[RMDB]
RNA sequence: GGGAACGACUCGAGUAGAGUCGAAAAGGGUGAUGUCUCCUAACCUUUAUCAAUGGGGGCACUCGGUCGUGCUGUGGGUAGAAAUUUUAUUUCGUGCCUACCUGAGACGCUUGUCGUCGGGAGUAUGUGGGACUGAUGAACUUCGGUUCAUCAGUAAGUGAUCACCGUAGUUCGCUACGGUGAUCACAAAAGAAACAACAACAACAAC
Reactivity to 2A3 in 0.01 (KOAc 150mM, MgCl2 10mM, bicine 150mM(pH8.5), 24C), signal-to-noise 1, nucleotides 027 to 156: g010g000g000u150g000a150u000g100u020c020u000c090c000u020a160a190c020c000u050u240u060a190u130c190a060a140u220g000g000g020g020g000c020a040c000u000c000g010g000u000c010g000u020g100c010u010g000u030g020g000g020u000a030g180a050a030a020u190u190u110u080a220u000u060u280c010g020u080g030c000c000u000a070c000c010u070g030a070g000a050c000g000c090u090u300g080u180c020g000u020c010g000g050g000a060g000u070a040u160g020u300g050g000g000a000c020u000g000a000u000g000a010a010c030u030u110c150g000g000u000u000c000a000u000c000a000g010u000a000a000
The data come from the RNA Mapping Database (RMDB), library M2RFPK. An RNA of 207 nucleotides, treated with 2A3 and read out base by base. For 2A3, 399 sequencing reads were counted.